[RMDB]
RNA sequence: GGGAACGACUCGAGUAGAGUCGAAAAACUGCGGUAUUCGUACCGCAGUACAUAAAAAGGAUAAAAAACCAGUAGCCCGAAACGCAAGCGAGCACUACUGGCGCAAGAACCACUUCGGUGGUUCUAACUACGCGAUAACUUUCGAGUUAUCGCGUAGAAAAGAAACAACAACAACAAC
Reactivity to 2A3 in 0.01 (KOAc 150mM, MgCl2 10mM, bicine 150mM(pH8.5), 24C), signal-to-noise 1, nucleotides 027 to 126: a010c020u010g000c020g010g010u000a030u020u060c120g040u020a020c010c000g000c000a000g000u020a000c000a000u240a030a140a040a010a000g180g000a060u220a130a160a010a000a000a000c010c000a040g000u010a030g100c010c070c080g010a130a150a020c110g020c090a060a090g080c030g060a010g020c020a000c030u020a010c010u010g030g000c020g010c040a010a010g000a000a000c010c000a000c020u010u080c160g030g000u030g000g000u010u040c000u000a010a010
Reactivity to DMS in 0.01 (KOAc 150mM, MgCl2 10mM, bicine 150mM(pH8.5), 24C), signal-to-noise 1, nucleotides 027 to 126: a000c000u000g000c000g020g020u000a010u000u060c300g020u000a000c000c020g000c000a010g010u000a020c050a110u010a000a060a170a070a090g010g000a100u000a000a070a030a060a060a080c000c000a040g010u000a020g000c070c140c050g020a080a080a020c070g020c220a100a110g000c030g000a130g010c190a190c040u000a000c000u000g000g050c080g010c190a120a000g020a000a000c000c000a000c000u000u010c180g040g040u000g060g010u000u000c000u000a020a190
About this RNA:
This 177-nucleotide RNA was probed chemically with 2A3 and DMS. For 2A3 the reverse transcriptase was SuperScript II with manganese. The RNA was probed in 150 mM KOAc, 10 mM MgCl2 and 150 mM bicine (pH 8.5) at 24 C.